[RMDB]
RNA sequence: GGGAACGACUCGAGUAGAGUCGAAAAUACGUCGUGAGACAGUAUGGUUUCUAUCUUCUAGAGGGAAUUAGAAUAUAAUAAGGAUUAACCUUUGUACGAAAGGAACAUGGGGUACUAUUGUUAUACCUAGUUGUAUAACAGUUUUAUUAACCUCUGGGACGCAAGGAAAGUUCGCUUUCCUUGCGUCAAAAGAAACAACAACAACAAC
Reactivity to 2A3 in 0.01 (KOAc 150mM, MgCl2 10mM, bicine 150mM(pH8.5), 24C), signal-to-noise 2, nucleotides 027 to 156: u110a020c040g000u010c010g000u070g070a060g020a020c040a050g100u070a110u150g070g000u030u120u000c010u030a090u010c010u020u030c020u020a000g000a000g000g020g030a050a030u100u040a080g020a060a010u080a000u050a050a090u050a110a000g010g020a020u040u090a150a150c010c030u070u020u120g050u110a080c110g080a160a050a030g030g010a050a000c020a130u110g000g010g000g010u030a030c020u040a050u030u000g000u000u000a000u000a000c010c020u040a050g050u230u240g000u050a000u000a000a000c000a000g000u040u000u050u020a070u000u090a070a050c000c000u060c000u020g000g050